[RMDB]
RNA sequence: GGGAACGACUCGAGUAGAGUCGAAAAUCUGUUUACAAGUUAUCGUUAAGUCCAUGUCUGACUACGAUUCCGUAAACAGAAGCCAGUUUGCGUCAAGUCCGACAUGGACUUUUGGCAGAACUGAUCAAGUGCUGACUGAGUUCGCUCAGUCAGCACUAAAAGAAACAACAACAACAAC
Reactivity to DMS in 0.01 (KOAc 150mM, MgCl2 10mM, bicine 150mM(pH8.5), 24C), signal-to-noise 2, nucleotides 027 to 126: u000c000u000g000u020u010u020a060c180a060a080g000u000u000a090u010c070g020u000u010a030a090g000u000c010c010a000u000g000u000c040u000g020a000c020u000a170c180g000a090u000u030c190c030g000u000a000a020a010c040a040g010a070a080g020c170c110a090g020u000u000u000g000c020g000u000c120a090a020g020u000c000c110g010a040c070a000u000g000g010a020c000u000u000u000u010g000g010c130a120g000a010a040c000u000g000a140u010c120a050